[RMDB]
RNA sequence: GGGAACGACUCGAGUAGAGUCGAAAAUCCGACUCUCAUAGGCUCUCCAACCCUACUCCUACUCAAUACGUCCUCGUCGUACAGAACGGUAACAUGUUUUCCGAACAUCCGCGCUUGGGUAUACGAGAAAGGCGUAGAUUAUUCGUAAUCUACGCAACUCCCGAUACCAAUUCGUUGGUAUCGGGAGAAAAGAAACAACAACAACAAC
Reactivity to 2A3 in 0.01 (KOAc 150mM, MgCl2 10mM, bicine 150mM(pH8.5), 24C), signal-to-noise 2, nucleotides 027 to 156: u080c010c010g030a070c020u040c010u000c060a050u080a130g020g040c030u040c000u030c040c050a040a050c030c000c000u050a060c000u050c020c020u040a050c020u040c060a070a010u110a130c030g020u020c050c000u040c000g070u010c000g020u060a080c030a090g080a180a050c030g010g050u070a090a050c050a150u090g060u080u040u040u040c040c010g040a040a010c000a090u070c050c030g040c020g020c080u070u070g130g000g030u040a070u030a110c020g010a000g040a060a040a020g090g020c010g000u000a000g000a000u000u000a010u000u020c040g030u060a010a010u000c000u000a000c010g000c000a010a000